An RNA of 177 nucleotides, treated with 2A3 and DMS and read out base by base.
It was measured as part of the RMDB library OK2TRN.
DMS adducts were read by reverse transcription with MarathonRT.

RNA sequence: GGGAACGACUCGAGUAGAGUCGAAAAGCAGCUGGAUCAAUUGGUUCCUCGGAAUCAAGGGCAACGAGUUCCUCUGCCACGUGCCCACCAACUACUUUCAGGACACGUUCAACCAGAUGGGCCUGGAACUGACUCAUCGGUUCGCCGAUGAGUCAGUAAAAGAAACAACAACAACAAC
Reactivity to 2A3 in 0.01 (KOAc 150mM, MgCl2 10mM, bicine 150mM(pH8.5), 24C), signal-to-noise 1, nucleotides 027 to 126: g000c000a010g030c010u040g040g010a070u150c070a010a170u060u030g010g010u000u010c020c030u070c240g090g020a010a020u040c080a090a060g000g120g000c000a050a050c100g000a000g080u060u030c030c050u050c060u060g000c000c010a050c050g060u020g000c010c000c010a040c000c020a080a030c010u220a060c030u040u100u100c020a010g010g000a050c040a000c110g060u000u120c050a050a090c010c010a030g020a150u090g000g040g080c000c000u020g010g000a010
Reactivity to DMS in 0.01 (KOAc 150mM, MgCl2 10mM, bicine 150mM(pH8.5), 24C), signal-to-noise 1, nucleotides 027 to 126: g040c060a010g010c090u000g010g000a060u000c210a070a240u000u010g000g010u010u000c010c020u020c300g070g010a020a010u010c000a020a020g000g010g030c070a050a030c080g000a300g010u000u000c010c070u000c190u020g000c000c000a050c060g040u000g000c000c000c000a160c110c010a040a040c060u000a020c000u000u020u010c110a020g020g010a010c060a040c020g000u000u000c060a140a170c040c060a040g020a060u000g020g010g000c060c020u000g000g010a090